RNA sequence: GGGAACGACUCGAGUAGAGUCGAAAACAGCAUGGUCGGCGAAGCGAUGACUCUGGCCGUCCUCCAGCCGGUUCUGGACAAGGCGACUUCCAACGGCACUUUCACCUAUGGCAAGGACAUCAGCGCCGAGGGCCAGAAUAUUCGUAUUCUGGCCCUCAAAAGAAACAACAACAACAAC
Reactivity to DMS in 0.01 (KOAc 150mM, MgCl2 10mM, bicine 150mM(pH8.5), 24C), signal-to-noise 1, nucleotides 027 to 126: c130a150g010c110a110u000g010g010u000c060g050g000c010g000a070a090g010c060g000a090u000g000a130c080u000c040u000g010g030c000c000g000u000c050c020u000c020c030a100g000c060c070g000g000u010u000c100u010g010g000a070c180a100a140g000g000c060g000a120c090u010u010c040c030a000a080c110g000g020c020a070c100u000u000u000c120a080c060c060u000a070u000g030g020c100a070a090g000g000a160c000a040u010c080a090g000c060g020c090c090
Reactivity to 2A3 in 0.01 (KOAc 150mM, MgCl2 10mM, bicine 150mM(pH8.5), 24C), signal-to-noise 1, nucleotides 027 to 126: c010a030g090c010a070u110g050g010u060c010g060g000c040g060a130a030g020c010g070a070u080g060a030c010u050c070u070g040g000c020c000g010u030c000c010u000c000c010a020g040c020c020g080g010u140u090c030u090g050g000a040c010a060a050g030g050c040g060a080c010u070u010c020c050a120a070c010g020g020c050a080c040u090u110u090c090a100c060c010u120a100u090g000g050c040a000a030g020g000a010c000a030u060c040a050g040c000g020c070c060